[RMDB]
Source: RMDB library M2PK90, as collected in RNAgym. The record gives the reactivity of an RNA of 177 nucleotides to 2A3 and DMS. For DMS the reverse transcriptase was MarathonRT. For DMS, 3,225 sequencing reads were counted. Reactivities are given for positions 27 through 126.
RNA sequence: GGGAACGACUCGAGUAGAGUCGAAAAAUACAGCGUAAUCGAGCGGAGGAAAACGGCACUCCGAAAAUCCGGUACGAUUAUGAUCCCACUGCGUCGACGCUAGAUGCUGAACCGGAUUGCCGAGGAAUUUGUGUAUACGGUUCGCCGUAUACACAAAAAAAGAAACAACAACAACAAC
Reactivity to 2A3 in 0.01 (KOAc 150mM, MgCl2 10mM, bicine 150mM(pH8.5), 24C), signal-to-noise 2, nucleotides 027 to 126: a000u150a040c060a020g040c010g050u070a070a000u070c030g020a050g080c000g020g000a010g010g060a080a110a060a040c000g000g020c010a020c050u030c000c000g020a060a020a000a030u010c000c010g000g030u050a070c040g020a050u080u040a040u180g070a050u010c020c020c000a020c080u090g020c010g070u040c040g030a070c060g040c150u080a030g030a070u080g010c050u050g050a040a030c010c000g000g000a010u000u030g000c000c000g010a010g020g070a050a080
Reactivity to DMS in 0.01 (KOAc 150mM, MgCl2 10mM, bicine 150mM(pH8.5), 24C), signal-to-noise 4, nucleotides 027 to 126: a090u010a110c080a080g020c010g010u000a080a040u000c010g000a120g000c000g000g010a050g000g000a040a040a090a130c040g010g010c070a050c070u000c010c010g010a050a110a060a060u000c010c000g010g010u000a130c150g000a070u010u000a040u010g000a090u000c000c000c000a160c160u020g010c050g020u000c020g000a070c090g000c120u010a060g010a070u000g010c000u000g000a090a060c050c010g000g000a020u020u000g020c030c010g000a150g010g000a060a110